[RMDB]
RNA sequence: GGGAACGACUCGAGUAGAGUCGAAAAAAUCCAUGAACCAUGUCAGGUCCGGAAGGAAGCAGCAUUAAGUGGACACCCCCAUGUGCCGCAGGGUUACCUGGACUGAGCUAACUACUUAAGUAACGCUUAUGGGUGCCAGUCGACAGAAGGUGCACGGCAAGGGAAACAUGUUCGCAUGUUUCCCUUGAAAAGAAACAACAACAACAAC
Reactivity to 2A3 in 0.01 (KOAc 150mM, MgCl2 10mM, bicine 150mM(pH8.5), 24C), signal-to-noise 3, nucleotides 027 to 156: a000a000u020c010c000a010u030g010a020a040c100c020a030u010g010u020c010a000g000g020u000c000c000g060g080a090a080g030g000a020a000g010c000a000g010c000a010u060u030a080a050g000u010g000g010a010c020a090c060c010c010c000c010a030u030g010u010g010c010c000g010c030a010g000g000g110u170u170a160c010c000u010g010g010a010c010u010g020a030g060c010u050a040a050c010u300a060c010u060u020a020a020g010u000a150a040c070g010c180u020u000a000u070g040g000g000u020g000c000c010a000g000u000c010g070a080c030a060g170a140a030g020g010u030g010c000a010c020g010g010
Reactivity to DMS in 0.01 (KOAc 150mM, MgCl2 10mM, bicine 150mM(pH8.5), 24C), signal-to-noise 3, nucleotides 027 to 156: a070a080u000c020c010a050u000g020a110a160c100c090a120u020g000u010c110a300g010g000u000c010c000g020g040a230a170g020g040a060a080g040c060a190g000c030a030u000u010a110a270g000u000g010g010a130c050a210c050c000c000c010c010a090u000g010u000g010c010c010g000c050a110g010g030g000u010u010a030c070c010u020g000g010a070c070u000g030a100g010c000u000a110a080c030u010a130c110u000u000a050a050g010u000a070a120c140g010c040u000u000a030u000g010g010g010u010g000c010c010a060g010u000c030g020a100c030a100g010a100a100g020g010u000g010c000a070c000g000g010
Chemical mapping of a 207-nucleotide RNA with 2A3 and DMS. The DMS profile rests on 4,191 reads.